[RMDB]
RNA sequence: GGGAACGACUCGAGUAGAGUCGAAAAGUAGAGCACCGAAAACCACGAGGAGGAGGCGCAGUGUUCUCUCCUGAGCGUGAAGCCGGCUCUUGGUGUCGCUUUGCUGCGACUGCCUUUUGCCAUUGAUUGUCUAACAUUACUUCGGUAAUGUUAGACAAAAAGAAACAACAACAACAAC
Reactivity to 2A3 in 0.01 (KOAc 150mM, MgCl2 10mM, bicine 150mM(pH8.5), 24C), signal-to-noise 1, nucleotides 027 to 126: g120u150a000g000a050g000c050a040c000c050g000a000a080a040a080c020c020a030c070g020a020g070g050a090g000g040a030g020g000c140g020c100a050g100u050g120u180u010c030u040c010u020c020c000u070g010a050g130c050g010u040g060a040a020g070c030c090g060g020c010u000c080u040u030g050g000u040g020u010c000g010c030u230u130u250g070c180u060g010c000g000a030c020u050g000c010c000u000u010u040u030g040c030c030a010u090u110g150a160u050
Reactivity to DMS in 0.01 (KOAc 150mM, MgCl2 10mM, bicine 150mM(pH8.5), 24C), signal-to-noise 2, nucleotides 027 to 126: g020u000a070g040a080g000c020a080c060c040g010a160a050a120a100c130c010a150c050g000a080g010g010a130g040g000a070g000g030c090g010c150a100g010u020g000u000u000c010u000c070u000c020c010u010g000a140g020c060g020u010g020a090a110g000c130c090g020g010c000u000c000u000u000g000g010u000g010u010c000g000c020u000u000u000g000c170u000g010c000g000a020c000u020g030c000c000u000u000u000u020g020c020c010a170u010u020g000a150u000
The record gives the reactivity of an RNA of 177 nucleotides to 2A3 and DMS. It was measured as part of the RMDB library RFMREP. For DMS, 1,120 sequencing reads were counted. For 2A3, 935 sequencing reads were counted.